[RMDB]
RNA sequence: GGGAACGACUCGAGUAGAGUCGAAAAUUCGCCCUGCCUUGGGCUCAUCAGGGGAUCAGCUCUAGACCCCGACCAGUUUGUGUAGGGAUGGCCUAGUCCCCUCUUCAGCGUUAAGUCCUUGACCAGCGACAAGCUCCCCAAACUCAACCGGGUCGGCGUUGUGAAGACUGUUCGCAGUCUUCACAACAAAAGAAACAACAACAACAAC
Reactivity to 2A3 in 0.01 (KOAc 150mM, MgCl2 10mM, bicine 150mM(pH8.5), 24C), signal-to-noise 1, nucleotides 027 to 156: u060u060c040g030c020c010c020u010g070c030c000u030u010g060g010g030c050u100c040a120u030c060a040g020g010g000g020a060u030c040a000g000c060u140c150u170a300g060a280c010c000c010c000g030a030c010c000a170g100u110u260u220g060u140g030u030a010g000g050g020a050u090g060g000c000c000u010a120g030u030c010c000c030c000u010c070u020u050c040a030g000c000g050u030u040a040a030g070u110c000c060u000u110g080a120c060c010a010g050c000g070a120c030a160a000g030c000u020c000c020c000c000a030a030a040c030u030c040a060a070c050c060g000g090g000u000c040g020g020c000

Structure probing data (2A3) for a 207-nucleotide construct. Values cover nucleotides 27 to 156.